[RMDB]
RNA sequence: GGGAACGACUCGAGUAGAGUCGAAAAAGCCACCGCUACGGCGGUGGCAAGUAGAAAAGUUGGUGCUUAGACCACGCCCUCAACCGUAAUAAUAGAUAAAUAGGCGAGUAUCAGUACGCUGAUACAAAAAACACUCACACGUUCGCGUGUGAGUGAACAUUAUACGUCUCUUCGGAGACGUAUAAUGAAAAGAAACAACAACAACAAC
Reactivity to 2A3 in 0.01 (KOAc 150mM, MgCl2 10mM, bicine 150mM(pH8.5), 24C), signal-to-noise 2, nucleotides 027 to 156: a000g000c010c000a020c030c040g030c030u040a030c200g140g000c000g010g000u030g000g000c020a000a000g040u050a010g070a080a030a030a000g040u060u020g030g020u130g010c150u090u060a020g040a030c000c000a000c020g000c020c000c000u060c080a040a030c030c010g040u050a030a040u100a150a020u050a110g100a050u170a090a120a070u120a070g120g000c090g040a030g010u000a010u010c000a030g010u030a010c230g010c100u010g000a000u000a020c020a000a170a000a000a000a000c000a000c000u010c000a000c000a000c000g030u070u050c150g020c000g110u000g000u000g000a020g000u000g000a010a000
Reactivity to DMS in 0.01 (KOAc 150mM, MgCl2 10mM, bicine 150mM(pH8.5), 24C), signal-to-noise 1, nucleotides 027 to 156: a070g050c010c000a050c040c000g010c030u000a080c300g070g030c000g010g000u000g000g010c000a010a010g020u000a100g000a260a070a100a130g000u000u010g020g030u000g010c020u000u000a090g000a090c010c080a060c030g010c010c020c010u000c060a130a110c020c000g040u000a070a150u020a150a110u000a050g000a070u000a040a090a150u000a000g000g000c000g000a100g000u000a040u000c000a050g000u020a080c300g060c020u000g030a040u000a010c010a030a090a130a110a130a130c000a000c000u000c020a030c000a000c000g020u000u010c260g090c000g010u020g050u000g000a000g030u000g050a070a110
The data come from the RNA Mapping Database (RMDB), library M2RFPK. Chemical mapping of a 207-nucleotide RNA with 2A3 and DMS. DMS adducts were read by reverse transcription with MarathonRT. The DMS profile rests on 1,731 reads. The reactions ran in a buffer of 150 mM KOAc, 10 mM MgCl2 and 150 mM bicine (pH 8.5), at 24 C. 2A3 adducts were read by reverse transcription with SuperScript II with manganese.